Source information
The record gives the reactivity of an RNA of 177 nucleotides to 2A3 and DMS. Values cover nucleotides 27 to 126. Source: RMDB library OK2TRN, as collected in RNAgym. The reactions ran in a buffer of 150 mM KOAc, 10 mM MgCl2 and 150 mM bicine (pH 8.5), at 24 C. High 2A3 reactivity points to a flexible backbone, as in loops and unpaired stretches. For 2A3, 812 sequencing reads were counted. For DMS, 857 sequencing reads were counted.
RNA sequence: GGGAACGACUCGAGUAGAGUCGAAAAGAUUACUAUUAUGAGUGCAAUAGAAAGGGUGUGAUUCCAAAGAUUUAAACUCUUGCAGUACAUCCUAUUAGCGACCAGACAAAUGGAUUGGAUCUCACCACGUGUUGUCUCAAUUCGUUGAGACAACACGAAAAGAAACAACAACAACAAC
Reactivity to 2A3 in 0.01 (KOAc 150mM, MgCl2 10mM, bicine 150mM(pH8.5), 24C), signal-to-noise 1, nucleotides 027 to 126: g020a020u170u150a080c050u070a000u130u080a110u180g110a060g120u030g050c010a020a010u070a200g140a190a130a000g080g000g000u000g000u000g050a090u250u000c070c000a020a080a000g050a010u100u160u270a090a080a050c050u040c000u010u080g060c030a030g010u010a010c010a040u000c000c000u020a030u020u060a050g000c000g060a050c000c000a040g070a170c030a020a110a010u080g000g020a030u020u060g020g000a020u020c000u000c030a040c050c000a050
Reactivity to DMS in 0.01 (KOAc 150mM, MgCl2 10mM, bicine 150mM(pH8.5), 24C), signal-to-noise 2, nucleotides 027 to 126: g000a150u000u000a130c030u000a000u010u010a090u010g000a110g040u000g030c050a060a100u000a090g010a140a140a060g020g000g000u010g000u000g010a030u020u000c150c010a030a080a120g010a070u000u000u000a110a050a110c180u000c030u000u000g000c080a030g020u000a020c050a020u000c050c020u010a110u010u000a150g040c060g030a100c090c030a160g010a120c070a030a140a070u000g000g000a120u000u000g020g000a040u000c020u000c060a130c010c050a190